[RMDB]
RNA sequence: GGGAACGACUCGAGUAGAGUCGAAAAUGCUGAGCUUUCGAGCUCAGCAGAGGCAAGCAAGCAGCGCAACGAGACAAGACGAGCAUAAGAUCGAGCAUGCUACAAUACGGCACUUCGGUGCCGUAAAUUAUUAUCAAUUGUUCGCAAUUGAUAAUAAAAAAGAAACAACAACAACAAC
Reactivity to DMS in 0.01 (KOAc 150mM, MgCl2 10mM, bicine 150mM(pH8.5), 24C), signal-to-noise 7, nucleotides 027 to 126: u000g010c000u000g000a000g010c010u000u000u010c160g010a020g030c000u000c000a010g010c000a010g000a090g010g010c070a070a060g010c070a070a050g020c030a040g010c050g010c040a050a050c060g010a080g000a070c090a060a060g000a080c120g010a060g010c040a040u000a070a070g000a060u000c070g010a100g010c070a040u010g000c040u000a080c140a080a140u000a000c000g010g000c020a010c000u000u010c180g010g020u000g020c000c000g010u000a000a020a060
Reactivity to 2A3 in 0.01 (KOAc 150mM, MgCl2 10mM, bicine 150mM(pH8.5), 24C), signal-to-noise 4, nucleotides 027 to 126: u040g000c000u010g010a010g000c000u060u050u220c240g090a010g000c000u000c000a000g000c000a000g000a020g020g030c050a030a050g010c010a040a020g000c010a020g010c030g010c060a050a050c030g020a020g030a100c040a080a010g050a060c040g060a010g030c020a030u050a130a050g040a060u080c040g020a020g010c020a010u030g000c010u050a070c020a030a100u050a040c030g000g000c010a000c000u040u080c240g040g010u010g000c020c000g000u000a000a000a000

Structure probing data (DMS and 2A3) for a 177-nucleotide construct. DMS adducts were read by reverse transcription with MarathonRT. The data come from the RNA Mapping Database (RMDB), library M2PK50. Reactivities are given for positions 27 through 126. 2A3 is a SHAPE reagent: it acylates the 2'-hydroxyl of flexible nucleotides of all four kinds.